Conditions: 150 mM KOAc, 10 mM MgCl2 and 150 mM bicine (pH 8.5), 24 C. Chemical mapping of a 207-nucleotide RNA with DMS and 2A3. For DMS, 5,308 sequencing reads were counted.

RNA sequence: GGGAACGACUCGAGUAGAGUCGAAAAGUUAGGUGAGGCUCCUAUGCAAACACAGGCCACUGCCCAAAAAUGUCCAAAGACGCCAAUGGGUAGAACAGGGACUGUCGGAUUAAGGCUUUCCAUAAUGAAAACAAAGUAUGCUUCGGCAUACUUUGAACCAUCUUGUUAUGUUCGCAUAACAAGAUGGAAAAGAAACAACAACAACAAC
Reactivity to DMS in 0.01 (KOAc 150mM, MgCl2 10mM, bicine 150mM(pH8.5), 24C), signal-to-noise 3, nucleotides 027 to 156: g010u000u000a070g010g020u000g030a070g020g020c000u000c050c020u000a070u000g020c070a130a120a120c050a090c010a030g010g000c010c030a270c020u000g010c000c000c020a000a030a070a150a070u010g010u000c020c040a080a160a200g030a070c020g030c050c060a060a280u000g000g000g030u000a030g020a060a170c110a200g010g010g030a050c040u000g010u010c020g020g020a170u000u010a040a080g020g020c010u000u000u010c030c020a090u000a040a060u010g000a060a080a120a200c000a010a010a020g000u000a010u000g000c000u010u010c300g040g020c000a000u010a000c000u000u000u000g000a060a120
Reactivity to 2A3 in 0.01 (KOAc 150mM, MgCl2 10mM, bicine 150mM(pH8.5), 24C), signal-to-noise 5, nucleotides 027 to 156: g050u050u050a020g000g030u050g060a040g040g010c030u090c060c020u100a070u160g060c050a070a100a020c020a010c010a060g020g010c000c000a030c020u010g000c000c000c000a020a040a030a000a000u020g000u000c020c030a180a070a150g010a010c010g000c000c010a020a030u010g000g000g000u020a010g000a040a040c110a070g040g020g050a080c000u010g000u040c050g040g020a060u110u130a080a040g040g000c020u060u030u000c010c000a050u080a160a120u200g100a060a050a040a020c000a000a000a000g000u000a000u010g000c010u030u110c180g080g000c000a000u000a000c030u000u000u000g000a010a000
It was measured as part of the RMDB library M2RFPK. The 2A3 profile rests on 5,026 reads. DMS adducts were read by reverse transcription with MarathonRT. 2A3 adducts were read by reverse transcription with SuperScript II with manganese.